Notes: The record gives the reactivity of an RNA of 177 nucleotides to DMS. High DMS reactivity at an A or C suggests that its Watson-Crick edge is free. Source: RMDB library OK2TST, as collected in RNAgym. For DMS, 549 sequencing reads were counted. The RNA was probed in 150 mM KOAc, 10 mM MgCl2 and 150 mM bicine (pH 8.5) at 24 C.
RNA sequence: GGGAACGACUCGAGUAGAGUCGAAAAGAAACCUUGCAUAUGUGAAGCAUGCAGAUGGGAAUGCUCUACGGGGGAGCUUAGCCAGAGAGACUUGUCAAAGAAGUAUCUCCAAAAAUGUGACCCCUGCUAGCCAUACGCAUUUCGAUGCGUAUGGCUAAAAAGAAACAACAACAACAAC
Reactivity to DMS in 0.01 (KOAc 150mM, MgCl2 10mM, bicine 150mM(pH8.5), 24C), signal-to-noise 1, nucleotides 027 to 126: g000a250a140a170c010c000u000u000g010c000a090u000a030u000g020u050g000a060a050g010c050a010u000g000c050a090g040a170u000g000g000g000a130a080u010g000c060u000c040u000a140c100g000g030g020g000g010a300g030c080u000u000a050g000c190c280a090g020a030g010a010g020a000c020u000u000g000u000c300a090a140a120g010a070a030g000u000a030u020c000u000c030c100a010a030a090a020a010u010g000u000g020a110c030c010c000c070u020g000c130